[RMDB]
RNA sequence: GGGAACGACUCGAGUAGAGUCGAAAAUACUAAAGGUGGGCGGAUCAAGGUAAAUCAUAUCGAACUCUUCGCUCUCUAACUCGCGUAAAUACUUCUUAAUAUCACGUCGAACCAAGCGAUGGUUACCACGAUAGAUAGUUUUCGAACUAUCUAUCGUAAAAGAAACAACAACAACAAC
Reactivity to 2A3 in 0.01 (KOAc 150mM, MgCl2 10mM, bicine 150mM(pH8.5), 24C), signal-to-noise 9, nucleotides 027 to 126: u100a010c050u070a050a040a040g070g010u040g010g020g010c030g010g010a030u070c060a050a030g050g000u070a090a130a070u130c060a070u070a050u190c050g040a050a060c020u010c010u100u040c010g000c020u010c000u000c010u030a070a060c010u010c030g030c010g080u060a010a100a060u090a120c030u050u110c020u060u160a130a100u110a050u170c070a040c110g050u030c010g050a070a070c030c030a060a000g030c020g050a050u040g010g040u020u030a040c040c040
Reactivity to DMS in 0.01 (KOAc 150mM, MgCl2 10mM, bicine 150mM(pH8.5), 24C), signal-to-noise 9, nucleotides 027 to 126: u010a100c070u010a070a080a100g010g020u000g010g000g020c050g010g000a060u010c110a080a120g010g010u000a050a080a100u010c120a070u000a100u000c070g010a070a090c110u000c090u000u000c020g010c050u000c030u000c030u000a080a100c080u000c050g010c090g000u000a040a070a080u000a060c100u000u000c070u000u000a070a090u010a070u000c100a040c040g010u000c030g010a040a110c080c100a070a090g010c050g000a050u000g010g000u000u000a100c120c080

Chemical mapping of a 177-nucleotide RNA with 2A3 and DMS. DMS adducts were read by reverse transcription with MarathonRT. For 2A3, 23,478 sequencing reads were counted. Values are in units of 0.01, from 0 to 300, in steps of 10. 2A3 adducts were read by reverse transcription with SuperScript II with manganese. The reactions ran in a buffer of 150 mM KOAc, 10 mM MgCl2 and 150 mM bicine (pH 8.5), at 24 C.